[RMDB]
About this RNA: Chemical mapping of a 207-nucleotide RNA with 2A3. For 2A3, 553 sequencing reads were counted. Conditions: 150 mM KOAc, 10 mM MgCl2 and 150 mM bicine (pH 8.5), 24 C. For 2A3 the reverse transcriptase was SuperScript II with manganese.
RNA sequence: GGGAACGACUCGAGUAGAGUCGAAAAAGAUGGCAGGUUCACCCCGUACGGUGCGGAAGUUCGCGCUUCCGUGAAACGCGAAAAUCGGACGGUGGCUGCAAGUCGCAGCGCAAAACCGCGGCAAGUGUUAACCUGGACCUCUUCGGAGGUCCAGGAACCACUGAAACAGGUUCGCCUGUUUCAGUGGAAAAGAAACAACAACAACAAC
Reactivity to 2A3 in 0.01 (KOAc 150mM, MgCl2 10mM, bicine 150mM(pH8.5), 24C), signal-to-noise 1, nucleotides 027 to 156: a000g120a060u100g060g020c030a030g070g070u170u120c040a050c010c000c030c000g030u030a050c060g000g020u030g020c000g010g000a030a040g030u090u290c050g050c020g030c090u010u000c030c000g000u020g010a100a110a000c120g040c020g070a100a030a000a110u150c070g010g010a010c030g000g040u030g020g000c000u020g000c030a000a080g070u080c000g040c020a070g030c010g010c070a000a050a040a170c090c080g010c010g010g000c010a090a100g040u000g000u230u100a060a020c010c000u000g010g000a000c000c000u030c020u020u030c080g120g000a000g000g000u000c010c000a000g000g000a010a010